[RMDB]
RNA sequence: GGGAACGACUCGAGUAGAGUCGAAAAGCGUGUUGCGCACGGCCGUACGGAAACCAUCCUGCCAAUGCCUCUGUUAUACCGUACGGAAACCAUCCGAUGUGUCGUUGCGUGGAUGGGAAAGCAUGCACGUGUGUUGGACCAGGAUGGGAAAGCAUGCGCCCCUAUAUACCUUCGGGUAUAUAGGGGCAAAAGAAACAACAACAACAAC
Reactivity to 2A3 in 0.01 (KOAc 150mM, MgCl2 10mM, bicine 150mM(pH8.5), 24C), signal-to-noise 1, nucleotides 027 to 156: g050c030g000u030g020u100u080g050c170g000c090a020c010g000g080c000c000g010u000a000c000g010g030a120a040a000c020c000a000u000c010c000u020g020c030c020a030a030u160g040c020c000u150c020u090g170u300u080a230u110a150c000c000g000u000a000c000g000g010a050a000a000c000c000a000u060c010c010g230a050u080g000u020g000u140c040g080u090u080g000c000g080u040g000g000a000u010g000g000g060a000a000a050g050c020a000u080g020c000a000c020g090u100g000u000g040u050u050g090g000a000c020c020a000g020g000a000u040g010g020g020a110a090a010g060c020a000u140g020c090
The record gives the reactivity of an RNA of 207 nucleotides to 2A3.
The data come from the RNA Mapping Database (RMDB), library OK3TST.
The reactions ran in a buffer of 150 mM KOAc, 10 mM MgCl2 and 150 mM bicine (pH 8.5), at 24 C.
For 2A3, 724 sequencing reads were counted.